[RMDB]
RNA sequence: GGGAACGACUCGAGUAGAGUCGAAAAUAGGUCGUGAAUAAGGCCGGAGUACAUUCCCUAUGGAACUAAGGGAACCCCUCCGGUCUUAUCCAACCUCUGUUUCGGCAGAGGAUACCGUGCUCCACAGCUGUAAGGCUGUGGGCCCGAGAGAAGCGCUCAGUGUAACACACUUCGGUGUGUUACACUGAAAAGAAACAACAACAACAAC
Reactivity to 2A3 in 0.01 (KOAc 150mM, MgCl2 10mM, bicine 150mM(pH8.5), 24C), signal-to-noise 1, nucleotides 027 to 156: u260a070g120g030u100c060g020u040g120a080a030u000a010a000g000g000c000c000g000g000a000g000u110a040c050a130u000u040c020c000c020u080a140u170g170g050a120a080c110u090a220a120g030g000g000a000a000c030c000c000c000u000c000c000g010g000u000c000u000u000a000u000c000c000a020a060c010c010u010c000u000g050u000u040u120c150g060g000c010a000g000a000g000g000a000u030a010c020c010g020u010g000c000u030c050c000a000c000a000g010c000u060g080u290a180a060g060g000c000u000g000u000g000g000g000c000c000c020g080a090g010a010g030a120a060g050c140g060c060u000
Conditions: 150 mM KOAc, 10 mM MgCl2 and 150 mM bicine (pH 8.5), 24 C. Chemical mapping of a 207-nucleotide RNA with 2A3.